An RNA of 177 nucleotides, treated with DMS and read out base by base. DMS adducts were read by reverse transcription with MarathonRT. The RNA was probed in 150 mM KOAc, 10 mM MgCl2 and 150 mM bicine (pH 8.5) at 24 C. For DMS, 3,118 sequencing reads were counted. Reactivities are rounded to 0.1 and cut off at 0 and 3.
[RMDB]
RNA sequence: GGGAACGACUCGAGUAGAGUCGAAAAGAUAUGGAGACCUUGAUGCCUAAUAGAGCUCCGAAGAACUUAGUCGGAAACGACUAAGGGAGGAGCUCUAUUAGGAACUACAUCGGAGGUCUCCUAAGUCGUAUUCCAAUUAGUUCGCUAAUUGGAAUACAAAAGAAACAACAACAACAAC
Reactivity to DMS in 0.01 (KOAc 150mM, MgCl2 10mM, bicine 150mM(pH8.5), 24C), signal-to-noise 3, nucleotides 027 to 126: g000a140u010a300u010g010g000a010g010a020c010c000u000u000g000a030u010g000c000c000u000a000a010u000a010g020a010g000c000u000c000c000g000a130a170g030a180a210c010u000u000a010g010u000c000g010g020a130a120a260c010g010a020c010u010a000a010g000g000g000a050g010g000a000g000c010u000c010u000a000u000u000a000g000g000a020a010c070u020a300c010a030u000c010g010g010a010g010g000u000c000u000c000c000u000a010a090g010u000c130